Chemical mapping of a 177-nucleotide RNA with DMS and 2A3. It was measured as part of the RMDB library OK2TST. 2A3 is a SHAPE reagent: it acylates the 2'-hydroxyl of flexible nucleotides of all four kinds. Reactivities are given for positions 27 through 126. The DMS profile rests on 11,166 reads. Conditions: 150 mM KOAc, 10 mM MgCl2 and 150 mM bicine (pH 8.5), 24 C.

RNA sequence: GGGAACGACUCGAGUAGAGUCGAAAAGGCGGAGGGGCGAUUGCCAUUGCUCCCGAAGGAGAGCUGGGGUUAUUCGCUGAAAAGGGUGAUAUUAUCUUCGCAGGGAAUAGUACGAUAAGAGGAAGGCGUAAUGCCUGUAGUUCGCUACAGGCAUUACAAAAGAAACAACAACAACAAC
Reactivity to DMS in 0.01 (KOAc 150mM, MgCl2 10mM, bicine 150mM(pH8.5), 24C), signal-to-noise 6, nucleotides 027 to 126: g010g020c040g000g010a080g020g010g010g010c020g000a030u000u000g000c030c030a100u000u000g010c020u000c010c010c020g010a150a120g000g010a040g000a030g010c020u000g010g000g010g010u000u010a030u010u000c010g020c020u000g010a040a040a070a100g000g010g000u000g000a100u000a060u010u010a090u000c040u000u010c110g010c050a070g010g000g000a080a100u000a060g010u010a060c160g010a090u010a050a070g000a100g010g010a070a080g020g010c170
Reactivity to 2A3 in 0.01 (KOAc 150mM, MgCl2 10mM, bicine 150mM(pH8.5), 24C), signal-to-noise 5, nucleotides 027 to 126: g050g020c040g000g040a050g030g040g010g000c010g030a040u010u050g030c010c020a060u040u080g000c000u020c030c000c000g110a120a040g100g040a090g000a000g010c030u040g000g000g060g000u030u100a050u090u050c030g000c040u050g040a040a060a020a030g040g000g020u060g040a030u050a070u220u100a070u050c040u050u050c030g000c040a020g020g000g010a060a090u060a120g080u060a060c060g030a090u050a170a050g030a020g070g010a070a020g040g000c050